The record gives the reactivity of an RNA of 177 nucleotides to 2A3.
RNA sequence: GGGAACGACUCGAGUAGAGUCGAAAACAACGCGUGUUCGCACGCGUUGAAAGAAAGCACGAAAAUAAAAUUAGGGAAAAGGGAACGUGCACCCACCCAUAAAAACGAGCCCGUUCGCGGGCUCGAACUACGCUACAUAGUUCGCUAUGUAGCGUAGAAAAGAAACAACAACAACAAC
Reactivity to 2A3 in 0.01 (KOAc 150mM, MgCl2 10mM, bicine 150mM(pH8.5), 24C), signal-to-noise 1, nucleotides 027 to 126: c010a020a000c000g000c000g020u010g040u060u070c230g030c080a010c010g000c000g000u000u000g000a000a000a010g050a020a050a020g010c010a010c080g200a300a170a040a000u250a060a170a080a100u240u300a210g020g000g020a030a130a070a150g060g000g010a080a020c030g000u000g010c000a040c080c040c000a040c000c000c000a030u150a040a160a010a000a000c000g000a000g000c000c030c000g040u090u080c250g000c020g120g000g070c010u000c000g000a000a000
Record summary:
The 2A3 profile rests on 915 reads. Conditions: 150 mM KOAc, 10 mM MgCl2 and 150 mM bicine (pH 8.5), 24 C. 2A3 adducts were read by reverse transcription with SuperScript II with manganese.